Chemical mapping of a 177-nucleotide RNA with 2A3 and DMS.
[RMDB]
RNA sequence: GGGAACGACUCGAGUAGAGUCGAAAAAUGGCGAUACCGCUGGAUUGUCGCGGAUGGCGCUUAACCUGAUGGACAACGCCGCGAAGUGGAGCCCGCCGGGCGGCCACGUGGGUGUCAGGCUGAGCCACAAACGGGUAAAAUUCGUUUUACCCGUUUGAAAAGAAACAACAACAACAAC
Reactivity to 2A3 in 0.01 (KOAc 150mM, MgCl2 10mM, bicine 150mM(pH8.5), 24C), signal-to-noise 6, nucleotides 027 to 126: a010u050g030g000c020g030a030u040a100c060c030g000c070u050g050g060a180u070u110g070u080c030g000c010g190g000a040u020g060g000c050g000c090u040u040a020a020c000c010u010g030a030u070g040g010a030c020a070a030c110g000c020c010g040c020g050a110a040g020u020g010g020a010g020c010c030c000g140c070c070g020g010g000c020g080g140c000c000a030c040g010u130g050g030g030u060g030u030c020a010g020g000c010u040g020a010g020c000c010a030
Reactivity to DMS in 0.01 (KOAc 150mM, MgCl2 10mM, bicine 150mM(pH8.5), 24C), signal-to-noise 9, nucleotides 027 to 126: a110u010g010g010c020g020a140u000a100c090c050g010c050u010g010g020a130u000u010g010u000c030g010c020g010g010a110u000g010g010c070g010c090u000u010a060a080c010c000u000g000a230u010g010g010a070c060a070a100c110g010c010c010g010c040g000a100a070g010u000g000g010a300g000c030c010c020g020c190c150g000g010g020c010g000g000c010c030a040c090g010u000g010g020g010u000g000u000c020a020g000g010c020u000g000a080g000c010c050a200

Source information
The reactions ran in a buffer of 150 mM KOAc, 10 mM MgCl2 and 150 mM bicine (pH 8.5), at 24 C.